[RMDB]
RNA sequence: GGGAACGACUCGAGUAGAGUCGAAAAUGUGGAAGUACUGCCAUUAUCCUGCUGAAAGAAAAGCCGUGUUAAUCAUUUUUGAUUUUGCCUUUAUGAGGGUAAAAUCAUGACAGAUUGACAUGGACAAGUCACCACGCAUAUUCGUAUGCGUGGUGACAAAAGAAACAACAACAACAAC
Reactivity to 2A3 in 0.01 (KOAc 150mM, MgCl2 10mM, bicine 150mM(pH8.5), 24C), signal-to-noise 3, nucleotides 027 to 126: u160g000u000g010g030a080a030g110u220a130c070u120g030c000c000a030u100u110a050u110c000c000u030g110c110u060g150a150a090a030g070a000a140a020a010g020c000c000g020u010g000u000u000a010a020u000c020a060u010u000u090u060u070g000a010u000u000u000u000g020c000c030u110u150u170a250u270g270a130g000g000g000u010a000a000a000a000u000c000a000u010g010a020c020a020g010a000u000u000g000a000c000a000u000g020g020a020c000a000a050
Structure probing data (2A3) for a 177-nucleotide construct. 2A3 adducts were read by reverse transcription with SuperScript II with manganese. The data come from the RNA Mapping Database (RMDB), libraries RFM100 and RFMREP. The reactions ran in a buffer of 150 mM KOAc, 10 mM MgCl2 and 150 mM bicine (pH 8.5), at 24 C.